[RMDB]
An RNA of 177 nucleotides, treated with 2A3 and DMS and read out base by base. 2A3 adducts were read by reverse transcription with SuperScript II with manganese. It was measured as part of the RMDB library OK2TRN. The 2A3 profile rests on 896 reads.
RNA sequence: GGGAACGACUCGAGUAGAGUCGAAAAAUGUUCAGCAUUGUGCUUAUGUUGGAGAAAUUGAAGUGAACUUCGCUAAUAAACGAUAGUAGGUAUGGUUGUUUGAAUUGGGAGGUGUUAAAACUGGUAGCGUUGAUUCCUUAUUCGUAAGGAAUCAACGAAAAGAAACAACAACAACAAC
Reactivity to 2A3 in 0.01 (KOAc 150mM, MgCl2 10mM, bicine 150mM(pH8.5), 24C), signal-to-noise 1, nucleotides 027 to 126: a010u110g060u050u090c030a020g020c000a030u060u060g050u060g050c050u110u030a050u170g100u050u060g070g000a030g060a040a150a080u140u080g030a010a020g080u030g120a070a030c000u060u010c010g000c030u040a060a030u100a160a170a040c040g030a030u050a060g090u030a010g000g000u020a030u120g070g010u000u080g060u020u040u110g070a050a040u050u010g020g020g010a130g000g000u050g000u040u040a040a020a050a040c000u000g080g040u070a010g030
Reactivity to DMS in 0.01 (KOAc 150mM, MgCl2 10mM, bicine 150mM(pH8.5), 24C), signal-to-noise 3, nucleotides 027 to 126: a070u010g010u000u000c040a050g000c030a050u020u010g020u000g020c070u000u000a040u000g020u010u010g000g010a060g000a070a080a130u010u020g000a070a080g000u010g010a100a090c070u000u000c030g020c060u000a050a080u010a070a040a090c040g010a020u000a050g020u010a050g020g000u010a050u010g020g000u010u010g020u000u010u010g000a050a110u000u010g000g010g000a050g010g000u000g010u000u010a040a040a070a070c100u000g000g010u010a090g010